[RMDB]
RNA sequence: GGGAACGACUCGAGUAGAGUCGAAAAUAUACAUUAGAAGUCAGCACAGCUCCCGACUCGCGGUGUGCGAUGCUACGUCGCGCGAGCGACGUAGCUGCUGUGCAGACGGCUAGCAAAAGCUAGCCAAAUUAUGAUGGUCGUUCGCGACCAUCAUAAUAAAAGAAACAACAACAACAAC
Reactivity to DMS in 0.01 (KOAc 150mM, MgCl2 10mM, bicine 150mM(pH8.5), 24C), signal-to-noise 1, nucleotides 027 to 126: u040a070u120a210c170a070u030u000a060g020a100a140g000u010c000a090g000c000a030c000a040g000c000u000c030c000c000g000a190c290u000c000g030c090g010g100u060g000u020g000c010g010a030u000g030c000u020a000c040g080u000c000g000c020g080c300g000a270g000c000g100a050c070g050u000a000g000c000u030g000c000u010g000u000g000c000a100g020a020c020g000g000c010u020a000g000c010a190a060a120a200g020c000u010a000g020c000c010a000a040
Reactivity to 2A3 in 0.01 (KOAc 150mM, MgCl2 10mM, bicine 150mM(pH8.5), 24C), signal-to-noise 2, nucleotides 027 to 126: u080a010u060a040c060a070u230u280a110g090a300a040g020u010c020a020g000c020a000c000a030g000c000u030c040c000c000g150a120c030u000c000g030c000g210g200u290g140u300g240c000g010a010u050g040c000u000a000c010g000u030c000g000c020g020c030g040a060g040c000g000a000c000g000u000a000g000c000u000g000c000u000g000u000g000c020a020g000a000c000g020g010c000u040a000g000c020a180a030a300a220g000c000u000a000g000c000c010a010a050
Chemical mapping of a 177-nucleotide RNA with DMS and 2A3. Conditions: 150 mM KOAc, 10 mM MgCl2 and 150 mM bicine (pH 8.5), 24 C.